[RMDB]
RNA sequence: GGGAACGACUCGAGUAGAGUCGAAAAUUUUCUUAGAUGGUAAAUGUCUCGCCUGUGCUAUAUUUUGUUUUUCGGUUAGUUAAAUAUCGUACGUUCAUAUUUGAACGUUCUGCCGGAAUGCAUUAUCGCGCUUUAUUAUGUUCGCAUAAUAAAGCGCAAAAGAAACAACAACAACAAC
Reactivity to DMS in 0.01 (KOAc 150mM, MgCl2 10mM, bicine 150mM(pH8.5), 24C), signal-to-noise 1, nucleotides 027 to 126: u010u000u030u010c020u000u000a120g020a070u030g000g010u000a040a060a050u010g020u010c010u000c010g010c010c030u010g000u030g010c050u000a080u030a050u050u000u000u020g000u000u030u000u020u000c040g020g010u010u030a070g010u070u010a020a040a070u020a090u030c210g000u030a010c000g000u000u010c000a060u020a200u000u000u000g000a010a000c000g000u000u000c000u000g000c060c000g010g010a000a010u010g000c060a020u020u020a010u040c250
Reactivity to 2A3 in 0.01 (KOAc 150mM, MgCl2 10mM, bicine 150mM(pH8.5), 24C), signal-to-noise 4, nucleotides 027 to 126: u060u050u020u020c020u080u120a170g020a220u120g030g050u090a130a160a010u130g020u000c010u000c040g000c000c000u010g020u040g020c020u040a030u040a060u210u050u040u010g000u000u010u000u000u000c010g010g040u020u180a030g010u040u170a100a210a050u210a130u160c130g020u020a000c000g000u000u000c040a040u130a180u260u060u190g000a000a000c000g000u000u000c010u020g000c000c000g010g000a010a010u010g000c000a020u020u050a060u150c070